The record gives the reactivity of an RNA of 177 nucleotides to DMS and 2A3.
DMS adducts were read by reverse transcription with MarathonRT.
In probing experiments dimethyl sulfate is read out at A N1 and C N3, which are open when not base-paired.
The RNA was probed in 150 mM KOAc, 10 mM MgCl2 and 150 mM bicine (pH 8.5) at 24 C.

RNA sequence: GGGAACGACUCGAGUAGAGUCGAAAAUCUGCCGAGGUAGUCUGUGGGGUAGAGCGACGGAUUGGGGGACCGCACUCCGAGAGGAGUGCGCCCCCCUGUCCAACUCCGAACCUACAGACGCCAUUUGAACGGGAAUUACAUUCGUGUAAUUCCCGUUAAAAGAAACAACAACAACAAC
Reactivity to DMS in 0.01 (KOAc 150mM, MgCl2 10mM, bicine 150mM(pH8.5), 24C), signal-to-noise 2, nucleotides 027 to 126: u000c020u010g030c080c120g060a100g000g000u000a060g040u000c000u010g000u030g000g000g000g010u000a300g000a000g000c140g000a110c300g000g000a030u010u000g000g030g050g020g000a050c290c000g020c000a020c000u000c000c000g000a260g000a260g020g040a040g030u000g020c010g020c080c000c000c000c000c030u000g000u000c000c000a270a210c000u000c020c000g000a160a260c010c000u000a000c000a010g000a030c000g010c020c000a070u000u030u010g000
Reactivity to 2A3 in 0.01 (KOAc 150mM, MgCl2 10mM, bicine 150mM(pH8.5), 24C), signal-to-noise 3, nucleotides 027 to 126: u020c050u110g110c060c060g090a080g010g010u110a180g000u160c000u000g000u000g000g000g000g030u100a040g010a020g000c060g120a090c130g000g000a010u010u010g020g000g000g020g010a010c020c000g000c000a000c000u000c000c020g060a050g010a020g050g000a010g000u010g000c000g000c000c000c000c000c000c010u000g010u000c000c000a000a000c000u040c020c010g080a140a120c000c000u000a000c000a000g000a000c000g000c000c010a020u060u030u120g060